[RMDB]
RNA sequence: GGGAACGACUCGAGUAGAGUCGAAAAAUGAAUUGAUUCGUCAAUUCAUGACCGCAAGCGAGCCGAAAGGCAUUUUAUGCCUACGCUGGCGAAAGCCUAAAAAUCAUCGUGUCUUCGGACACGAUAAAUGUAGGGCCUCAUUCGUGAGGCCCUACAUAAAAGAAACAACAACAACAAC
Reactivity to 2A3 in 0.01 (KOAc 150mM, MgCl2 10mM, bicine 150mM(pH8.5), 24C), signal-to-noise 1, nucleotides 027 to 126: a000u010g000a000a010u010u000g010a000u040u050c200g080u000c050a000a000u010u020c010a000u070g160a020c000c050g000c030a040a010g010c020g100a020g080c100c120g270a250a060a000g010g000c020a020u040u100u050u110a060u040g000c000c010u000a010c020g000c000u010g050g000c000g030a110a010a000g060c000c000u080a050a040a020a010a000u140c060a020u020c020g000u000g020u000c030u010u020c280g080g000a010c000a010c010g000a000u050a000a060
Reactivity to DMS in 0.01 (KOAc 150mM, MgCl2 10mM, bicine 150mM(pH8.5), 24C), signal-to-noise 1, nucleotides 027 to 126: a020u000g000a000a000u000u000g000a060u000u010c190g010u000c000a040a010u000u000c000a010u000g000a160c090c000g050c060a100a080g000c040g000a090g010c060c120g020a100a090a070g000g020c000a020u000u000u000u000a050u010g010c000c000u010a090c170g030c030u000g030g070c000g010a070a050a180g000c050c040u000a010a070a070a100a060u000c090a040u000c000g060u010g000u000c000u000u030c170g000g000a000c040a000c000g000a000u000a000a040
Background: Structure probing data (2A3 and DMS) for a 177-nucleotide construct. The 2A3 profile rests on 1,008 reads. 2A3 adducts were read by reverse transcription with SuperScript II with manganese. Conditions: 150 mM KOAc, 10 mM MgCl2 and 150 mM bicine (pH 8.5), 24 C.